About this RNA
An RNA of 207 nucleotides, treated with 2A3 and read out base by base. Reactivities are given for positions 27 through 156. Source: RMDB library OK3TST, as collected in RNAgym. 2A3 adducts were read by reverse transcription with SuperScript II with manganese. The RNA was probed in 150 mM KOAc, 10 mM MgCl2 and 150 mM bicine (pH 8.5) at 24 C.
RNA sequence: GGGAACGACUCGAGUAGAGUCGAAAAAUGUAGAAUCUAGCCCUAAUGAUUAGAAGUUAUUAAGAGUAUUUGGACUUGUAUAAACAAUCUGGUUCUAUCUGGGGAUUCUCCAGGGAUUCAACGGCUCUUCCCAUACUUACCUUCAGAUUUUACCUCCAAUACGGCACUGAUUCGUCAGUGCCGUAUUAAAAGAAACAACAACAACAAC
Reactivity to 2A3 in 0.01 (KOAc 150mM, MgCl2 10mM, bicine 150mM(pH8.5), 24C), signal-to-noise 1, nucleotides 027 to 156: a000u160g000u050a020g030a070a000u000c020u000a110g030c050c000c010u140a270a140u140g030a000u020u200a080g020a200a010g000u070u140a120u140u180a110a010g000a000g140u080a050u050u010u250g020g000a000c020u090u030g080u180a110u140a150a160a100c050a000a030u070c050u120g030g000u050u000c000u060a060u030c000u010g000g000g000g150a280u220u060c020u000c030c000a040g020g010g030a020u100u000c090a080a050c080g080g000c000u010c070u030u010c010c000c000a020u050a020c030u110u040a080c000c020u040u160c010a000g050a300u070u070u070u130a080c000c000u080c060c000